[RMDB]
RNA sequence: GGGAACGACUCGAGUAGAGUCGAAAAUGACCGCUCAAGAUUACGGAUACUUUGUCAGUAAUCAAUUUAUGUUUUAAUAAAUAAUUUGAGCUAAGGCCAGACGGACAGCCGGGUCAAAAGCCGAAAACGAGUAGUUGGUCUUCGGACCAGCUACUCGAAAAGAAACAACAACAACAAC
Reactivity to DMS in 0.01 (KOAc 150mM, MgCl2 10mM, bicine 150mM(pH8.5), 24C), signal-to-noise 3, nucleotides 027 to 126: u010g010a020c000c000g000c010u000c010a000a070g000a010u000u000a000c000g030g020a020u010a120c240u020u020u050g020u000c000a030g000u000a020a010u010c000a100a010u010u000u000a000u000g000u030u020u040u080a120a030u000a000a010a000u010a130a110u020u000u000g010a010g010c000u060a070a010g000g030c000c010a060g010a090c010g010g000a010c010a100g020c010c000g000g000g010u000c000a070a010a080a140g010c030c010g000a280a100a090a170
Reactivity to 2A3 in 0.01 (KOAc 150mM, MgCl2 10mM, bicine 150mM(pH8.5), 24C), signal-to-noise 9, nucleotides 027 to 126: u100g010a010c000c000g000c000u000c010a020a040g000a000u000u010a000c010g020g000a020u040a160c160u170u190u300g030u040c020a020g000u000a000a010u000c010a010a010u010u010u010a020u010g020u000u270u100u150a120a060u040a050a030a040u130a050a140u050u020u030g000a000g000c050u070a140a020g000g000c000c000a030g020a040c000g010g000a000c000a000g000c000c000g020g000g000u000c000a010a010a010a010g000c000c000g000a020a000a000a000
The data come from the RNA Mapping Database (RMDB), library OK1LIB. The record gives the reactivity of an RNA of 177 nucleotides to DMS and 2A3. The 2A3 profile rests on 11,276 reads.